[RMDB]
RNA sequence: GGGAACGACUCGAGUAGAGUCGAAAACGUGAACGCGAGACGUACGAAGAUGAGGAUGUGUUGUCGUCGUCUGACGAAUCAUCCGGCCGACCGAUUCCGCGUUACGUCGGACGUGACACCGACCACAGGAUCACUGCGGAUUCGUCCGCAGUGAUCCAAAAGAAACAACAACAACAAC
Reactivity to 2A3 in 0.01 (KOAc 150mM, MgCl2 10mM, bicine 150mM(pH8.5), 24C), signal-to-noise 2, nucleotides 027 to 126: c040g020u000g040a020a010c010g070c020g040a060g010a050c030g000u040a000c000g030a060a050g010a090u090g030a020g080g000a030u030g200u010g050u150u170g060u050c010g000u000c010g090u040c260u210g020a010c010g000a010a090u160c020a040u010c030c000g000g000c010c010g030a040c000c030g000a030u010u080c020c000g050c010g050u040u090a000c010g000u010c010g040g000a000c010g010u010g020a060c010a030c160c000g060a060c000c040a080c050a100
Reactivity to DMS in 0.01 (KOAc 150mM, MgCl2 10mM, bicine 150mM(pH8.5), 24C), signal-to-noise 2, nucleotides 027 to 126: c240g040u000g010a290a030c000g030c040g000a300g000a030c010g000u000a040c050g010a140a030g010a020u000g020a230g000g000a050u000g000u000g000u010u000g020u000c010g020u010c020g020u000c180u020g000a030c020g020a040a080u030c070a080u020c130c090g020g020c130c010g000a070c090c030g000a220u000u010c050c220g050c010g020u000u000a020c040g030u010c020g000g000a270c030g000u000g000a110c000a020c030c030g010a250c020c010a140c140a070

The record gives the reactivity of an RNA of 177 nucleotides to 2A3 and DMS. Source: RMDB library OK2TRN, as collected in RNAgym.